RNA sequence: GGGAACGACUCGAGUAGAGUCGAAAAGGACAAUUCUAUGGUUGUCAAUGAAAGCCUAGAACUCAGAGGCAAUUUAAACUGGAAAAUAGUUUCAACUAGUCUCUCAGUUAUUGAGCCUCACAGUUACUUUAGUCAGCUAGUUAGCUCUCUUGUGGGCAUCAUGUUAGCGUUUCGACGCUAACAUGAUAAAAGAAACAACAACAACAAC
Reactivity to 2A3 in 0.01 (KOAc 150mM, MgCl2 10mM, bicine 150mM(pH8.5), 24C), signal-to-noise 2, nucleotides 027 to 156: g110g010a050c050a040a060u080u070c110u230a130u300g080g000u040u000g030u020c030a000a050u170g060a140a030a010g010c030c010u030a080g030a040a000c010u010c060a010g010a000g000g010c000a000a020u000u020u030a100a040a030c040u010g070g070a000a070a060a130u090a040g050u060u200u180c040a100a040c020u040a030g010u000c000u000c010u010c040a000g000u000u060a040u020u070g040a050g040c000c000u090c000a040c010a000g010u070u080a050c050u050u130u120a030g050u140c030a010g000c050u110a050g070u150u140a000g020c000u000c010u030c000u120u130g050u130g060g050g060c010
Reactivity to DMS in 0.01 (KOAc 150mM, MgCl2 10mM, bicine 150mM(pH8.5), 24C), signal-to-noise 1, nucleotides 027 to 156: g060g000a040c020a090a050u000u000c100u020a140u020g000g050u010u020g010u000c050a190a140u000g000a090a050a120g010c000c050u000a110g030a050a070c050u020c020a210g020a050g010g010c010a040a150u000u000u010a020a070a040c000u000g030g040a120a020a010a050u000a030g040u000u010u030c130a080a130c020u000a050g020u000c020u000c000u000c020a060g050u000u000a100u010u000g000a300g000c030c020u000c010a140c050a070g000u000u000a070c120u000u010u020a030g030u000c020a070g010c020u000a110g020u000u010a090g000c000u000c000u000c060u000u000g000u000g000g040g040c060